[RMDB]
RNA sequence: GGGAACGACUCGAGUAGAGUCGAAAAACAUGAUGGCAUCUCCAGAAAAAACAAUGACUAGUUGCCAGGAGAAACGUAAUAAGCGGCCUAAGAGUUAAAAAAAAGCUGAAAGACAUAUCUGAAUUGGGAGGCAUAAAAUAUUCGUAUUUUAUGCCUCAAAAGAAACAACAACAACAAC
Reactivity to DMS in 0.01 (KOAc 150mM, MgCl2 10mM, bicine 150mM(pH8.5), 24C), signal-to-noise 2, nucleotides 027 to 126: a110c080a050u000g010a160u010g000g000c020a070u000c030u010c070c050a140g010a010a060a050a090a080a070c080a070a040u000g000a080c080u000a100g010u010u000g000c020c010a070g010g010a060g010a070a110a080c070g000u010a080a080u000a080a180g010c030g010g000c030c020u000a080a090g000a100g010u000u030a000a000a000a110a160a130a100a110g000c050u010g000a040a020a020g010a030c020a050u000a050u010c070u000g000a060a150u010u020g000g010
An RNA of 177 nucleotides, treated with DMS and read out base by base. Values cover nucleotides 27 to 126. The DMS profile rests on 1,020 reads.